RNA sequence: GGGAACGACUCGAGUAGAGUCGAAAAUUCAGGACAUCCACGGGGCCCACGAGCAUACAGCGUGAGGACCAGACGCGCACCAUUCACGUGCUCGCAGGCCUGGCUCCCGGGGCUACGAUCGACAAGGACAUCGUGUUCCGUUCGCGGAACACGAUGUAAAAGAAACAACAACAACAAC
Reactivity to 2A3 in 0.01 (KOAc 150mM, MgCl2 10mM, bicine 150mM(pH8.5), 24C), signal-to-noise 1, nucleotides 027 to 126: u090u040c060a000g090g070a000c020a050u070c000c040a080c080g020g020g080g000c000c050c010a000c010g000a010g000c010a050u130a180c090a100g010c020g020u010g010a070g070g070a030c020c000a000g050a080c030g040c010g000c020a130c090c020a050u070u000c000a010c130g030u140g000c020u010c010g000c070a030g000g010c000c010u030g000g000c020u080c040c010c000g010g000g060g030c010u060a060c030g030a090u130c090g040a030c010a080a060g130g000
Reactivity to DMS in 0.01 (KOAc 150mM, MgCl2 10mM, bicine 150mM(pH8.5), 24C), signal-to-noise 2, nucleotides 027 to 126: u010u030c060a060g000g000a100c110a030u000c000c090a130c070g050g000g000g010c020c000c030a160c030g010a070g010c040a120u010a220c220a180g010c000g000u000g010a040g010g000a120c090c020a110g010a120c040g040c070g060c030a150c120c040a080u030u010c130a100c060g000u000g000c010u010c040g020c070a050g000g000c030c040u050g000g040c150u000c020c000c010g030g000g000g020c080u000a000c090g060a040u010c030g000a130c180a090a040g010g020